[RMDB]
RNA sequence: GGGAACGACUCGAGUAGAGUCGAAAACUGUCCUGGCCGGUGCUUUUCUGCUCCCCUGCACUCGGUUUUGCAGGGUAGCCUGGCAGGACACACAGCAUCCCCCUCUCAGUUUAGGAGAGCCGUCCUAAAUUUAGAACCCUUUCGAGGGUUCUAAAUUAAAAGAAACAACAACAACAAC
Reactivity to 2A3 in 0.01 (KOAc 150mM, MgCl2 10mM, bicine 150mM(pH8.5), 24C), signal-to-noise 3, nucleotides 027 to 126: c030u020g000u030c000c000u050g100g130c010c010g000g040u140g000c070u110u150u160u160c050u060g070c030u070c010c010c010c010u000g000c000a020c060u130c140g100g010u100u170u070u030g010c000a020g000g000g000u010a000g000c000c000u000g000g010c020a000g020g000a000c000a000c020a000c000a000g020c020a110u070c000c000c000c000c000u010c000u010c010a190g080u100u090u150a070g030g040a010g010a020g060c040c030g040u020c000c000u040a040
Reactivity to DMS in 0.01 (KOAc 150mM, MgCl2 10mM, bicine 150mM(pH8.5), 24C), signal-to-noise 2, nucleotides 027 to 126: c100u000g020u000c000c000u010g020g030c000c000g050g020u030g020c010u000u010u010u000c050u000g020c040u000c070c030c000c020u000g020c000a020c150u010c160g020g040u010u020u000u000g020c010a000g000g010g010u010a020g000c000c000u010g000g000c000a020g000g010a030c000a050c150a080c100a100g010c120a140u000c010c000c010c040c030u000c010u000c060a170g010u010u000u020a060g010g000a060g000a030g010c080c080g000u010c000c020u000a050
The data come from the RNA Mapping Database (RMDB), libraries RFM100 and RFMREP. Structure probing data (2A3 and DMS) for a 177-nucleotide construct. The reactions ran in a buffer of 150 mM KOAc, 10 mM MgCl2 and 150 mM bicine (pH 8.5), at 24 C. Reactivities are given for positions 27 through 126. Values are in units of 0.01, from 0 to 300, in steps of 10.